[RMDB]
RNA sequence: GGGAACGACUCGAGUAGAGUCGAAAAGAUAUGGAGGAAGGUAUUUGUGUCCGCAGCAAAGCUUAUAGCUCGGAAACGAGCUGAUUAAUGCUGAACUACGGAUAACAAAUACCUUCCUCCUAAGUCACAGGGAAUAGAAGUUCGCUUCUAUUCCCUGAAAAGAAACAACAACAACAAC
Reactivity to DMS in 0.01 (KOAc 150mM, MgCl2 10mM, bicine 150mM(pH8.5), 24C), signal-to-noise 2, nucleotides 027 to 126: g010a020u000a300u000g020g020a040g020g020a030a000g010g010u000a000u000u000u000g000u000g010u000c000c000g010c040a010g000c030a050a290a050g000c020u000u000a060u000a030g000c000u000c000g000g000a150a070a300c000g010a010g000c000u010g000a120u000u010a020a050u020g040c020u000g000a270a130c020u000a010c000g000g000a030u000a040a010c000a010a000a000u000a000c000c010u000u000c010c000u020c000c000u000a010a070g000u000c020a300

The record gives the reactivity of an RNA of 177 nucleotides to DMS. Conditions: 150 mM KOAc, 10 mM MgCl2 and 150 mM bicine (pH 8.5), 24 C. For DMS, 2,062 sequencing reads were counted. It was measured as part of the RMDB library TTRINS.